[RMDB]
Background:
Chemical mapping of a 177-nucleotide RNA with 2A3 and DMS. The RNA was probed in 150 mM KOAc, 10 mM MgCl2 and 150 mM bicine (pH 8.5) at 24 C. It was measured as part of the RMDB library OK2TRN. Values cover nucleotides 27 to 126.
RNA sequence: GGGAACGACUCGAGUAGAGUCGAAAAGUCGCCCGGCCCCUACGCACUGUCAAUAUCCCCGGCGGCGACUGGGCCACCGUGACACAAGCUCUGCGGGAUGAGCACACUACACCAUUCGAUCUCGAGACCACGUAGAGAGAUUCGUCUCUCUACGUGGAAAAGAAACAACAACAACAAC
Reactivity to 2A3 in 0.01 (KOAc 150mM, MgCl2 10mM, bicine 150mM(pH8.5), 24C), signal-to-noise 2, nucleotides 027 to 126: g010u010c000g060c000c000c000g020g030c000c000c010c020u010a020c030g010c010a090c100u170g000u170c060a120a120u070a170u300c030c050c000c000g000g030c010g020g020c010g010a070c060u030g030g110g000c010c000a020c020c050g040u050g020a010c020a010c010a130a000g000c020u010c030u090g030c050g020g040g010a050u050g020a020g000c020a000c000a000c030u150a030c040a030c020c030a050u110u080c040g050a070u010c030u020c020g020a030g030a020
Reactivity to DMS in 0.01 (KOAc 150mM, MgCl2 10mM, bicine 150mM(pH8.5), 24C), signal-to-noise 4, nucleotides 027 to 126: g020u000c060g020c020c020c050g040g010c030c020c040c070u020a120c110g020c060a070c070u010g000u000c050a090a140u000a150u000c010c010c000c140g020g030c040g010g000c010g000a060c120u000g030g020g010c020c020a060c030c060g000u000g020a080c080a040c170a120a110g000c030u000c040u000g020c060g010g010g010a060u010g000a060g020c030a110c060a050c070u000a070c050a100c040c030a100u000u000c070g010a060u000c020u000c010g000a140g020a270